Source information: The record gives the reactivity of an RNA of 177 nucleotides to 2A3 and DMS. For DMS the reverse transcriptase was MarathonRT. Values are in units of 0.01, from 0 to 300, in steps of 10.
[RMDB]
RNA sequence: GGGAACGACUCGAGUAGAGUCGAAAAGCUACCGGCGACGAGCUGGCCCUACGCCUUGUCAACCACGCUCGUGCGGAGGCGGGAAAUGGGCGGCCGUAGCAAAGCGCAAACGAUGGGCUGGCGUUACAUCAUAGGGAAAGUUCGCUUUCCCUAUGAUAAAAGAAACAACAACAACAAC
Reactivity to 2A3 in 0.01 (KOAc 150mM, MgCl2 10mM, bicine 150mM(pH8.5), 24C), signal-to-noise 6, nucleotides 027 to 126: g010c020u070a070c030c050g050g010c030g030a050c020g040a040g040c020u070g130g030c010c010c010u030a030c020g020c020c000u090u150g120u140c040a050a060c050c030a090c060g080c040u190c150g090u120g030c050g040g040a030g020g000c000g000g000g050a070a150a090u110g030g010g000c000g000g000c000c000g020u030a020g000c000a050a110a000g040c070g010c030a080a060a050c080g070a080u090g020g030g000c030u030g020g000c010g030u060u060a060c040
Reactivity to DMS in 0.01 (KOAc 150mM, MgCl2 10mM, bicine 150mM(pH8.5), 24C), signal-to-noise 9, nucleotides 027 to 126: g010c040u000a100c070c050g020g010c020g010a060c050g000a140g020c010u000g020g030c010c010c010u010a150c110g010c010c010u000u010g020u000c100a100a180c090c030a090c040g010c100u010c190g010u000g010c110g010g000a120g010g000c020g000g000g010a050a080a090u010g000g010g010c010g010g000c020c030g010u000a050g010c020a070a060a080g010c080g020c090a060a070a080c110g000a100u000g010g000g010c020u000g010g010c030g010u000u010a080c170